[RMDB]
RNA sequence: GGGAACGACUCGAGUAGAGUCGAAAAAGUGUGGCUGUCAAUGUUCGCGAUAAUCGACACCGGGUCGGCCGUGGCCUUCCGGACUAAGGCGAUCAGUCCCUGCGCCAGAAUGGCCCCGUUAUCCGGCAGUUUCGCCGUCGAGAUAAACGAGUCAUGGUCGCGACUGAGUAUUCGUACUCAGUCGCGAAAAAGAAACAACAACAACAAC
Reactivity to 2A3 in 0.01 (KOAc 150mM, MgCl2 10mM, bicine 150mM(pH8.5), 24C), signal-to-noise 1, nucleotides 027 to 156: a000g190u130g060u160g080g020c010u100g110u300c110a170a030u170g010u050u050c000g000c020g010a080u070a120a090u010c040g000a000c080a060c000c010g000g000g000u030c090g020g000c020c010g090u050g000g000c000c000u070u020c040c060g050g000a010c060u110a010a010g010g000c010g030a100u090c060a080g160u160c000c000c010u000g050c030g000c010c000a000g030a020a120u160g000g000c000c010c000c000g020u020u030a000u000c000c000g000g000c020a040g030u110u030u090c120g030c100c000g030u010c040g020a090g000a170u080a090a160a000c010g040a110g010u190c180a220u130g120g000

Record summary
The data come from the RNA Mapping Database (RMDB), library OK3TST. The record gives the reactivity of an RNA of 207 nucleotides to 2A3. For 2A3 the reverse transcriptase was SuperScript II with manganese. The reactions ran in a buffer of 150 mM KOAc, 10 mM MgCl2 and 150 mM bicine (pH 8.5), at 24 C. The 2A3 profile rests on 416 reads.